RNA sequence: GGGAACGACUCGAGUAGAGUCGAAAAGGGUUUCCCGCCUCGCAGCCCCCGCCCCUGGACUUGCUUCUCCUCCUCCCUCUGCGUGUGGAGGGAGCCAACGCUUAGGCCGGAGCGAGCCUAGGGGCCGUACGGCCGCUUCAUUCGUGAAGCGGCCGUAAAAAGAAACAACAACAACAAC
Reactivity to 2A3 in 0.01 (KOAc 150mM, MgCl2 10mM, bicine 150mM(pH8.5), 24C), signal-to-noise 2, nucleotides 027 to 126: g050g000g010u000u080u070c010c020c000g030c000c030u030c030g030c010a030g050c000c020c020c010c040g010c000c000c010c000u000g000g020a060c010u000u000g000c000u000u000c040u000c000c000u000c020c000u000c010c020c000u070c030u070g010c070g160u260g080u170g080g000a000g000g010g020a000g030c010c050a130a040c120g040c140u170u190a050g030g020c060c090g000g000a010g000c000g000a000g000c000c000u020a000g000g000g010g010c000c010g000
Chemical mapping of a 177-nucleotide RNA with 2A3. Source: RMDB library RFM100, as collected in RNAgym. The RNA was probed in 150 mM KOAc, 10 mM MgCl2 and 150 mM bicine (pH 8.5) at 24 C.